Chemical mapping of a 177-nucleotide RNA with 2A3 and DMS. The RNA was probed in 150 mM KOAc, 10 mM MgCl2 and 150 mM bicine (pH 8.5) at 24 C. Values are in units of 0.01, from 0 to 300, in steps of 10. For DMS the reverse transcriptase was MarathonRT. High DMS reactivity at an A or C suggests that its Watson-Crick edge is free. For 2A3, 6,946 sequencing reads were counted.
[RMDB]
RNA sequence: GGGAACGACUCGAGUAGAGUCGAAAAGAUAUGGAUGUUCGAACUGCGCGAUGAAAUCGGAAACGAUGGAGCGUGGUUCGAGACAUCCUAAGUCAAACCGAAGGAUCUGUUCGCAGAUCCUUCGGAAUCUUUUUAAACUGUUCGCAGUUUAAAAAGAAAAAGAAACAACAACAACAAC
Reactivity to 2A3 in 0.01 (KOAc 150mM, MgCl2 10mM, bicine 150mM(pH8.5), 24C), signal-to-noise 3, nucleotides 027 to 126: g020a010u080a040u170g010g000a000u000g020u010u010c000g000a010a010c010u010g000c030g000c010g280a300u060g020a040a030a020u020c000g010g020a080a070a050c020g010a010u020g010g030a010g000c020g000u020g000g010u000u010c010g000a000g000a000c000a000u000c000c000u010a080a010g030u020c060a060a020a120c020c010g020a000a000g010g000a010u010c000u010g010u100u180c300g000c120a010g000a000u000c000c000u000u000c000g000g000a000a000
Reactivity to DMS in 0.01 (KOAc 150mM, MgCl2 10mM, bicine 150mM(pH8.5), 24C), signal-to-noise 5, nucleotides 027 to 126: g000a040u000a300u010g000g010a010u000g010u000u000c000g010a010a010c000u000g010c000g010c010g000a140u010g000a050a120a010u000c000g000g000a130a100a190c020g000a010u000g000g000a050g020c000g020u000g000g010u000u000c000g000a020g010a010c000a010u000c000c000u000a030a080g000u000c020a080a110a190c000c000g000a010a010g000g010a010u000c000u000g010u000u010c190g010c010a010g010a000u000c010c000u000u000c010g000g000a030a020